[RMDB]
RNA sequence: GGGAACGACUCGAGUAGAGUCGAAAAAGCAGCAGCAGCAGCAGCAGCUGCCCCCCAUCGGCGGCCCCAUCCCCGCUAACAACCCGGGCAACACCCUCCUGUCCCUGCUGCAGGCCAAUGCGCGCAGCCGUAUAGGUAGCUUCGGCUACCUAUACGGAAAAGAAACAACAACAACAAC
Reactivity to DMS in 0.01 (KOAc 150mM, MgCl2 10mM, bicine 150mM(pH8.5), 24C), signal-to-noise 3, nucleotides 027 to 126: a080g020c010a030g010c020a070g030c020a090g030c040a070g000c050a160g020c090a070g010c010u010g000c020c020c030c010c010c030a100u000c070g030g020c020g010g000c030c040c000c040a110u000c050c030c020c030g000c100u000a050a090c090a070a080c040c020c020g010g010g010c020a060a050c070a130c040c010c020u000c050c030u000g010u010c020c020c030u000g010c020u000g010c030a110g010g020c010c060a050a070u010g000c050g010c070g020c030a080g010